[RMDB]
Structure probing data (DMS and 2A3) for a 177-nucleotide construct. It was measured as part of the RMDB libraries RFM100 and RFMREP. Values cover nucleotides 27 to 126. 2A3 adducts were read by reverse transcription with SuperScript II with manganese.

RNA sequence: GGGAACGACUCGAGUAGAGUCGAAAAGUUAGAUAAUUCUAAGCGCAAACUUGGUCUGAUGAACUAAGAGUAUAUUCCGGAGUAUACUUUGACUUAAAGGCGUUAUAAAGAGUUGAAACCUGUACUAGCGUAUUACACAGUUCGCUGUGUAAUACGCAAAAGAAACAACAACAACAAC
Reactivity to DMS in 0.01 (KOAc 150mM, MgCl2 10mM, bicine 150mM(pH8.5), 24C), signal-to-noise 3, nucleotides 027 to 126: g000u010u000a070g000a090u000a070a090u010u010c020u000a060a110g010c060g040c060a040a040a130c080u000u010g010g000u010c000u010g010a220u010g020a100a080c190u030a110a060g000a020g000u010a010u000a030u020u000c080c070g020g000a080g000u010a000u000a010c050u000u010u000g050a060c050u010u000a010a140a070g000g010c020g000u010u000a050u030a070a080a100g000a030g000u010u000g010a080a120a150c050c050u020g000u020a130c070u000a110
Reactivity to 2A3 in 0.01 (KOAc 150mM, MgCl2 10mM, bicine 150mM(pH8.5), 24C), signal-to-noise 2, nucleotides 027 to 126: g020u030u060a060g000a150u130a060a190u130u000c030u040a030a000g010c000g030c020a050a010a180c020u020u030g080g000u000c060u070g190a280u100g030a140a000c040u080a190a000g000a000g100u040a000u030a000u080u090c030c060g050g070a020g000u030a000u010a060c000u080u000u070g040a020c020u040u080a120a000a000g090g000c010g000u020u000a110u020a040a080a030g010a000g000u010u000g100a140a080a040c030c060u110g020u090a050c030u070a080